An RNA of 207 nucleotides, treated with 2A3 and DMS and read out base by base. Source: RMDB library OK3TST, as collected in RNAgym. Conditions: 150 mM KOAc, 10 mM MgCl2 and 150 mM bicine (pH 8.5), 24 C.
RNA sequence: GGGAACGACUCGAGUAGAGUCGAAAACAAGAAAAUUACCUUAACACCACUCUUCUUUAGGCCACUUCAGACAAACCAGAAUGUCUGCAAGUUAAGUCGUGCUAGACUUUUUCCUCCUUUCUUCUAGUCUGAUCCUCAAACUUUGAAUGAAUGUGUAAGUGGUAAUAGCUUUCGAGCUAUUACCACUAAAAGAAACAACAACAACAAC
Reactivity to 2A3 in 0.01 (KOAc 150mM, MgCl2 10mM, bicine 150mM(pH8.5), 24C), signal-to-noise 4, nucleotides 027 to 156: c060a050a050g090a080a110a040a010u150u080a100c010c020u090u110a120a000c030a020c030c000a060c040u060c040u090u040c020u030u100u070a030g040g000c040c010a020c000u000u030c000a010g030a020c000a040a140a110c060c010a040g100a280a070u040g030u000c000u020g060c130a040a000g000u070u120a040a010g020u010c010g020u040g090c050u070a040g010a060c000u100u080u030u030u020c020c020u020c010c000u000u120u040c010u030u000c010u010a030g030u000c020u040g050a090u030c020c020u060c030a020a070a120c060u120u130u050g030a060a050u070g030a070a020u070g060u010g030u110a050
Reactivity to DMS in 0.01 (KOAc 150mM, MgCl2 10mM, bicine 150mM(pH8.5), 24C), signal-to-noise 1, nucleotides 027 to 156: c120a070a150g000a090a050a120a040u010u010a070c080c020u010u010a070a080c030a080c010c070a080c100u000c050u000u010c060u000u000u000a120g010g000c030c060a080c080u010u000c000a040g010a030c020a010a060a150c030c300a190g010a140a250u000g010u020c010u010g000c090a020a020g020u010u000a090a070g000u000c030g000u000g000c070u010a100g010a030c010u000u000u000u000u000c020c000u000c030c030u000u010u010c000u000u000c020u000a080g010u000c020u010g000a080u010c110c030u000c010a030a060a070c070u000u010u020g020a080a130u000g010a060a100u000g000u000g030u010a080
Overview: For 2A3, 2,152 sequencing reads were counted. For DMS, 1,979 sequencing reads were counted.